[RMDB]
RNA sequence: GGGAACGACUCGAGUAGAGUCGAAAAUGGCUGUUCGCAGCCACAAGGGCGUACUACGUGACAUGAAGGCAUUGGGAGGCUCGUCCCAAAUAGGACGAGCCAUCGAUCAAUGUGAUCUUCAACAGCACGUAUCGCGGAAGAGAGCAUUCGUGCUCAAUACAAAUGUGAGAUUCGUCUCACAUUUGUAAAAAGAAACAACAACAACAAC
Reactivity to 2A3 in 0.01 (KOAc 150mM, MgCl2 10mM, bicine 150mM(pH8.5), 24C), signal-to-noise 5, nucleotides 027 to 156: u100g000g000c020u030g060u100u090c300g030c110a010g000c010c010a020c030a050a050g160g050g000c050g040u100a110c060u000a000c040g010u020g060a090c040a140u070g010a010a000g020g000c010a000u020u000g000g000g040a030g000g000c000u000c000g000u030c030c000c010a140a240a070u260a070g000g000a010c010g000a000g000c010c010a020u040c000g030a020u040c010a020a000u010g040u080g060a100u060c000u030u030c000a090a080c020a060g020c000a000c020g010u010a020u300c010g000c040g050g030a130a020g200a000g000a010g030c020a030u070u170c210g110u060g020c000u000c030a020a020
Reactivity to DMS in 0.01 (KOAc 150mM, MgCl2 10mM, bicine 150mM(pH8.5), 24C), signal-to-noise 3, nucleotides 027 to 156: u000g020g020c000u000g020u010u010c250g020c020a040g000c010c000a020c030a060a180g030g010g020c020g030u000a090c120u010a030c030g000u000g010a090c050a300u010g010a050a030g000g010c010a030u000u010g020g010g010a070g060g000c010u010c010g010u000c000c010c010a050a110a170u010a040g000g000a020c040g020a000g020c000c010a020u000c050g000a100u000c020a010a050u000g000u010g010a150u000c040u010u000c010a040a070c100a150g020c000a010c000g010u030a030u000c040g050c010g000g010a080a080g000a160g010a050g040c020a140u010u000c130g010u000g010c010u010c010a040a220
An RNA of 207 nucleotides, treated with 2A3 and DMS and read out base by base. The reactions ran in a buffer of 150 mM KOAc, 10 mM MgCl2 and 150 mM bicine (pH 8.5), at 24 C. DMS adducts were read by reverse transcription with MarathonRT.